Source information
Structure probing data (DMS and 2A3) for a 177-nucleotide construct. High 2A3 reactivity points to a flexible backbone, as in loops and unpaired stretches. For 2A3, 674 sequencing reads were counted. The RNA was probed in 150 mM KOAc, 10 mM MgCl2 and 150 mM bicine (pH 8.5) at 24 C. 2A3 adducts were read by reverse transcription with SuperScript II with manganese.
RNA sequence: GGGAACGACUCGAGUAGAGUCGAAAAGGGUUGCCGGCCUUGCCGAUGGCGGCGAUGCGGCCGUUCUUGAGCGCGAGGUCGGCCUUGACGAUGCCCCAGUGGUCGAGGAUCAGGGCAUUGGUGAUGAUUAGAAACCCUCAUUCGUGAGGGUUUCUAAAAAAGAAACAACAACAACAAC
Reactivity to DMS in 0.01 (KOAc 150mM, MgCl2 10mM, bicine 150mM(pH8.5), 24C), signal-to-noise 3, nucleotides 027 to 126: g020g030g010u000u000g000c010c020g010g000c000c040u000u000g000c000c020g000a170u010g000g010c010g020g020c040g050a120u030g020c230g010g000c000c010g000u020u030c030u000u000g020a300g010c230g000c000g040a010g010g010u020c000g000g000c010c020u010u000g000a120c010g070a040u010g000c000c000c000c300a130g000u020g000g000u010c010g020a190g030g010a030u010c010a290g000g050g010c010a000u010u000g000g040u000g000a110u010g010a240
Reactivity to 2A3 in 0.01 (KOAc 150mM, MgCl2 10mM, bicine 150mM(pH8.5), 24C), signal-to-noise 2, nucleotides 027 to 126: g070g010g000u090u040g020c000c000g010g010c000c000u000u000g010c000c000g000a020u030g000g040c020g040g000c010g020a100u260g070c060g270g000c060c000g030u160u180c060u080u050g020a090g050c170g000c000g080a000g000g020u000c000g000g000c000c000u020u030g010a000c060g100a000u000g000c000c000c000c000a120g080u210g120g040u030c060g120a140g090g120a090u040c010a000g030g020g000c010a010u000u020g000g030u080g020a300u000g040a060